[RMDB]
RNA sequence: GGGAACGACUCGAGUAGAGUCGAAAAGAUAUGGAUGGCAAUGAGAUAGUCUUCCGAUGGGAGGACAUGUAUCGGAAACGAUAUUUGUCCAUCGAUCAUCGGAAGACUAUUGAGCCAUCCUAAGUCACAAUAAACUCCCGUUCGCGGGAGUUUAUUGAAAAGAAACAACAACAACAAC
Reactivity to DMS in 0.01 (KOAc 150mM, MgCl2 10mM, bicine 150mM(pH8.5), 24C), signal-to-noise 2, nucleotides 027 to 126: g020a040u020a300u000g000g020a020u010g020g020c010a300a140u020g020a190g000a020u000a010g010u000c010u000u000c000c000g000a010u000g000g010g020a040g020g010a010c000a000u000g010u000a000u000c000g000g000a200a120a260c010g010a020u010a000u010u010u000g000u000c000c010a250u000c180g000a100u020c040a000u000c000g000g000a020a020g000a000c000u000a000u000u000g000a140g010c000c010a020u000c000c000u010a010a060g010u000c040a290
Structure probing data (DMS) for a 177-nucleotide construct. Conditions: 150 mM KOAc, 10 mM MgCl2 and 150 mM bicine (pH 8.5), 24 C. The data come from the RNA Mapping Database (RMDB), library TTRINS.